[RMDB]
This 177-nucleotide RNA was probed chemically with 2A3 and DMS. It was measured as part of the RMDB libraries RFM100 and RFMREP. Values cover nucleotides 27 to 126.
RNA sequence: GGGAACGACUCGAGUAGAGUCGAAAAAUCUGCGAGGGCAUAUCGUCCUCGCUUUUCUGUACCGUAAGGUGGUACAGGAAUAAGGGCUGGGCAAGACCGGUGCCAGCCGCCGCGGUAAUACCGGCAGUCCCUUAAUUCUGUUCGCAGAAUUAAGGGAAAAAGAAACAACAACAACAAC
Reactivity to 2A3 in 0.01 (KOAc 150mM, MgCl2 10mM, bicine 150mM(pH8.5), 24C), signal-to-noise 3, nucleotides 027 to 126: a000u060c050u040g000c000g010a010g000g010g010c020a060u130a080u300c160g010u010c000c000u010c000g000c000u000u000u000u000c000u010g010u000a000c000c000g040u110a090a120g200g130u200g020g000u070a000c010a010g030g050a000a010u110a060a060g060g010g000c020u050g000g040g060c100a100a050g030a080c000c030g020g000u020g030c000c000a010g000c000c000g000c030c030g070c090g050g030u090a050a020u030a180c000c000g000g020c000a000g090
Reactivity to DMS in 0.01 (KOAc 150mM, MgCl2 10mM, bicine 150mM(pH8.5), 24C), signal-to-noise 5, nucleotides 027 to 126: a080u030c100u000g020c010g010a020g000g010g000c010a160u030a070u040c220g010u000c000c000u000c000g020c000u000u010u000u010c000u000g000u000a000c010c000g010u030a130a160g030g050u040g010g010u000a010c010a010g010g000a010a040u020a090a110g020g000g010c010u000g010g020g010c080a050a070g000a220c030c020g000g010u000g010c010c010a010g010c010c000g020c060c020g000c180g010g000u000a070a080u010a150c010c000g000g000c030a230g010
Conditions: 150 mM KOAc, 10 mM MgCl2 and 150 mM bicine (pH 8.5), 24 C. For DMS the reverse transcriptase was MarathonRT.